[RMDB]
RNA sequence: GGGAACGACUCGAGUAGAGUCGAAAAUCUAAGAGCGUAACACACACUCAGACUGUACGUCAGUCUGACACACACAUACGCUAGUGUAUCGUGUGUGUGAUAUCGAUGUAGCACGAAAAUGAAAGAACUCUUGGAGCCAGUUCGCUGGCUCCAAGAGAAAAGAAACAACAACAACAAC
Reactivity to 2A3 in 0.01 (KOAc 150mM, MgCl2 10mM, bicine 150mM(pH8.5), 24C), signal-to-noise 1, nucleotides 027 to 126: u060c020u070a090a000g000a020g200c000g050u040a080a030c000a000c000a000c010a000c110u050c000a000g030a010c000u000g040u180a030c150g190u060c000a000g000u030c000u030g000a000c030a010c000a000c000a000c000a030u060a020c010g080c250u130a060g000u010g010u170a020u040c170g000u000g000u000g050u010g000u040g000a010u050a020u130c090g040a120u070g030u140a000g030c050a000c110g050a030a100a070a030u190g070a150a090a020g080a090a070
Reactivity to DMS in 0.01 (KOAc 150mM, MgCl2 10mM, bicine 150mM(pH8.5), 24C), signal-to-noise 1, nucleotides 027 to 126: u000c030u010a090a130g000a120g020c050g010u000a060a180c110a010c080a050c070a090c070u000c010a020g000a030c020u000g020u000a110c300g010u000c120a000g010u000c020u000g000a060c060a000c050a000c000a030c000a070u000a010c020g020c130u000a070g020u000g000u000a020u000c100g020u000g030u000g000u000g000u010g020a050u000a080u020c050g020a070u020g000u000a020g020c030a090c060g000a030a080a030a140u000g020a080a080a080g000a080a070
Background:
An RNA of 177 nucleotides, treated with 2A3 and DMS and read out base by base. Values cover nucleotides 27 to 126. For DMS the reverse transcriptase was MarathonRT.